[RMDB]
RNA sequence: GGGAACGACUCGAGUAGAGUCGAAAAGCCGUCAGCAGCCAGCGCAGACUUGGCGUUCCACAGAUAUGUCAAGCGCAUGCAGCGGCAGCCGGACCAGUGCAUCAGAUGCGCGCAUGGCGGCUCGCUGCAGGGAUGUACCGUUCGCGGUACAUCCCUGAAAAGAAACAACAACAACAAC
Reactivity to DMS in 0.01 (KOAc 150mM, MgCl2 10mM, bicine 150mM(pH8.5), 24C), signal-to-noise 5, nucleotides 027 to 126: g020c080c010g030u000c060a070g020c060a080g020c030c040a140g020c010g010c030a070g000a120c030u000u000g010g000c010g010u000u000c020c120a090c250a090g010a070u000a020u000g010u010c030a040a050g020c080g010c110a080u010g010c010a040g010c020g000g020c040a050g020c020c040g000g000a190c300c010a120g030u000g000c000a020u000c120a140g000a300u000g000c010g020c010g010c040a110u020g010g000c010g000g000c000u000c040g020c030u000g010
Reactivity to 2A3 in 0.01 (KOAc 150mM, MgCl2 10mM, bicine 150mM(pH8.5), 24C), signal-to-noise 3, nucleotides 027 to 126: g010c000c010g060u080c020a030g020c010a010g050c060c040a040g010c020g020c040a020g030a120c010u030u050g030g000c000g030u050u040c040c010a180c030a070g120a050u160a060u200g030u030c020a100a040g000c040g030c090a030u070g000c000a020g050c030g030g000c040a010g040c010c020g010g030a060c040c030a070g060u020g010c020a030u070c120a060g160a240u080g000c030g000c010g000c110a100u050g000g020c000g000g020c020u040c040g010c000u030g030